This 177-nucleotide RNA was probed chemically with DMS. Values cover nucleotides 27 to 126. It was measured as part of the RMDB library TTRINS. In probing experiments dimethyl sulfate is read out at A N1 and C N3, which are open when not base-paired.

RNA sequence: GGGAACGACUCGAGUAGAGUCGAAAAGAUAUGGAGCAAUCAGACCGAUAAAGGAGAGGUACGUAACAUCCAUCGGAAACGAUGGUGGUACUACCCACCUCCUGUCGGUCUGAUUGCUCCUAAGUCAGUCCAUGUAAUGGUUCGCCAUUACAUGGACAAAAGAAACAACAACAACAAC
Reactivity to DMS in 0.01 (KOAc 150mM, MgCl2 10mM, bicine 150mM(pH8.5), 24C), signal-to-noise 2, nucleotides 027 to 126: g000a010u000a300u010g000g020a030g010c000a010a010u010c000a000g030a020c000c000g010a030u010a090a210a050g010g000a020g010a110g030g000u010a030c300g020u000a000a020c010a000u030c000c000a020u000c000g030g020a160a110a200c010g010a010u000g000g060u000g000g000u000a000c000u000a000c000c000c040a210c290c020u000c000c000u000g010u000c000g000g000u000c000u000g000a010u010u000g000c000u000c000c030u000a000a070g010u000c050a090

The reactions ran in a buffer of 150 mM KOAc, 10 mM MgCl2 and 150 mM bicine (pH 8.5), at 24 C. Values are in units of 0.01, from 0 to 300, in steps of 10.